[RMDB]
RNA sequence: GGGAACGACUCGAGUAGAGUCGAAAACCUGAUACAAAGGUGUUGCCCAAUGCUCCCAAAACUACAGUUCCUGAAGAAGUUAGGGAAAUUGAUUUAAUUGGGUUGGAGGACAAAUUUGCAUCAGCGGGGGUCAUAUGUAGUUCGCUACAUAUGACCCAAAAGAAACAACAACAACAAC
Reactivity to DMS in 0.01 (KOAc 150mM, MgCl2 10mM, bicine 150mM(pH8.5), 24C), signal-to-noise 2, nucleotides 027 to 126: c030c000u000g010a050u000a000c050a030a020a010g000g050u000g010u010u000g020c080c000c020a020a070u000g000c190u000c020c000c000a010a030a090a100c090u000a130c040a050g000u000u000c020c000u030g010a140a160g020a170a110g020u000u000a260g000g010g000a000a030a050u000u010g000a150u000u000u000a090a160u000u000g000g000g000u000u000g010g000a190g000g000a010c030a000a040a070u000u000u000g000c020a030u000c000a020g030c090g040g000
Reactivity to 2A3 in 0.01 (KOAc 150mM, MgCl2 10mM, bicine 150mM(pH8.5), 24C), signal-to-noise 1, nucleotides 027 to 126: c000c000u010g020a000u000a030c030a010a030a000g030g040u010g030u040u120g300c020c000c000a000a030u150g000c080u110c040c040c000a030a040a020a020c010u030a030c000a040g040u060u010c050c020u050g040a090a030g130a150a000g090u060u180a040g020g010g070a020a030a050u140u060g090a060u010u070u150a090a050u060u010g080g000g000u080u110g030g050a150g000g060a030c010a000a090a000u040u040u010g000c000a000u000c000a030g030c050g170g080

An RNA of 177 nucleotides, treated with DMS and 2A3 and read out base by base. For DMS the reverse transcriptase was MarathonRT. Source: RMDB library OK2TRN, as collected in RNAgym. Reactivities are given for positions 27 through 126.